[RMDB]
RNA sequence: GGGAACGACUCGAGUAGAGUCGAAAAAGCGUUAUUACUCAAGGAACGAUAAGUGAGGGUAGUACUGCUAACACCAUUUGUGAUUUAUCACACUCCGCACCGCUGCUUCCUUGUGGAGUUGGUCGGUGUUCCAGUAAAUGUUCGCAUUUACUGGAACAAAAGAAACAACAACAACAAC
Reactivity to 2A3 in 0.01 (KOAc 150mM, MgCl2 10mM, bicine 150mM(pH8.5), 24C), signal-to-noise 5, nucleotides 027 to 126: a000g000c000g010u020u000a010u020u010a010c010u010c030a070a110g220g030a150a060c050g060a140u080a300a060g050u020g090a060g010g000g000u000a000g020u000a020c010u030g000c010u030a050a020c060a050c040c060a070u080u130u150g000u010g020a060u010u070u230a150u070c000a000c010a020c020u050c030c030g020c020a010c000c010g010c030u050g000c000u020u020c010c020u150u110g150u290g040g020a040g030u130u180g030g020u080c020g010g010u020
Reactivity to DMS in 0.01 (KOAc 150mM, MgCl2 10mM, bicine 150mM(pH8.5), 24C), signal-to-noise 3, nucleotides 027 to 126: a020g010c020g030u010u000a030u000u000a000c010u010c010a100a170g010g020a160a040c040g010a150u000a130a150g010u000g020a200g020g010g000u000a000g030u000a020c010u000g020c010u010a030a050c190a250c010c020a060u010u010u010g000u000g000a070u000u000u000a050u010c010a020c010a060c250u000c060c050g000c050a050c010c000g020c050u010g000c050u000u000c010c030u000u010g010u020g000g010a000g010u000u010g040g010u020c020g030g020u000
Chemical mapping of a 177-nucleotide RNA with 2A3 and DMS. The 2A3 profile rests on 5,209 reads. Reactivities are given for positions 27 through 126. Reactivities are rounded to 0.1 and cut off at 0 and 3. 2A3 adducts were read by reverse transcription with SuperScript II with manganese. It was measured as part of the RMDB library RFMREP.